An RNA of 177 nucleotides, treated with DMS and 2A3 and read out base by base. The reactions ran in a buffer of 150 mM KOAc, 10 mM MgCl2 and 150 mM bicine (pH 8.5), at 24 C. The data come from the RNA Mapping Database (RMDB), library RFM100.
RNA sequence: GGGAACGACUCGAGUAGAGUCGAAAAACGAGGCAAGCUCUGGAAAGCAACGCCGAGUCUCUGAGAAGAGGGAGCAUGGGGUGUGCUGAUUUAAAAACAGAAAAUGCAAAGUUGGACUGAAAAUAUCCGGGACUAAAAGGUUCGCCUUUUAGUCCCGAAAAGAAACAACAACAACAAC
Reactivity to DMS in 0.01 (KOAc 150mM, MgCl2 10mM, bicine 150mM(pH8.5), 24C), signal-to-noise 2, nucleotides 027 to 126: a130c020g020a050g010g030c020a100a110g000c140u030c020u020g010g080a120a090a000g000c000a020a040c060g000c010c000g000a130g040u000c000u000c030u040g040a120g010a200a080g010a030g010g000g000a160g020c070a050u050g030g010g020g000u000g010u000g030c000u000g000a130u010u030u020a060a050a040a070a150c070a040g000a010a050a130a110u010g030c150a060a060a050g010u020u000g000g020a140c190u020g000a100a010a100a080u060a060u040c100
Reactivity to 2A3 in 0.01 (KOAc 150mM, MgCl2 10mM, bicine 150mM(pH8.5), 24C), signal-to-noise 3, nucleotides 027 to 126: a000c050g000a040g050g020c040a020a030g000c010u000c010u070g030g080a160a070a000g030c040a150a010c010g020c030c000g020a000g040u000c010u000c000u030g070a070g040a170a030g020a070g010g020g000a040g040c040a160u200g050g000g000g020u060g010u000g000c000u010g050a120u020u180u210a050a140a010a000a000c050a010g070a020a080a010a010u080g010c030a080a030a040g020u030u000g020g020a070c070u060g070a130a030a030a020u160a060u020c060